[RMDB]
RNA sequence: GGGAACGACUCGAGUAGAGUCGAAAAUCGGCCCGGCUCAUCUCGACAAGAGGCGGCGAUCCUCAGUGCUCUUACUCUUUUCUGUAAAGAGGAGACUGCUGGAUUCGCCGCCCAAGUUCGAGCAUGAGCCAAGUCCGAACGAGGGAGCGCCCUGGGGGAAUAAUUAUUUGUUCGCAAAUAAUUAUUCAAAAGAAACAACAACAACAAC
Reactivity to 2A3 in 0.01 (KOAc 150mM, MgCl2 10mM, bicine 150mM(pH8.5), 24C), signal-to-noise 5, nucleotides 027 to 156: u020c010g010g000c030c020c020g000g000c000u010c000a010u000c000u000c000g010a000c010a100a110g100a160g070g000c000g000g010c000g000a010u000c000c000u020c020a060g020u150g250c050u000c030u130u260a300c000u030c020u100u100u120u100c180u280g250u300a030a020a000g000a000g000g010a010g010a000c000u010g100c080u030g000g010a020u200u080c000g000c000c000g000c000c000c000a000a000g010u030u040c000g000a000g020c020a000u000g000a000g000c000c000a000a000g000u000c010c000g010a020a030c050g020a080g020g050g020a050g100c030g020c040c000c010u040g020g000g010g020
Reactivity to DMS in 0.01 (KOAc 150mM, MgCl2 10mM, bicine 150mM(pH8.5), 24C), signal-to-noise 2, nucleotides 027 to 156: u000c010g020g040c030c040c050g040g010c010u010c000a040u000c000u020c000g020a090c050a300a240g000a170g010g010c010g040g000c000g010a000u010c020c010u000c020a070g020u000g000c160u010c010u010u000a300c000u000c000u010u000u000u000c200u010g020u000a040a060a020g030a070g040g000a090g010a050c030u000g020c100u010g000g010a090u000u010c000g050c000c000g030c000c000c000a020a130g020u000u000c010g010a040g020c100a040u000g010a040g000c000c010a010a020g010u000c000c030g020a080a160c060g010a170g000g040g010a140g020c080g000c040c010c010u000g010g020g060g010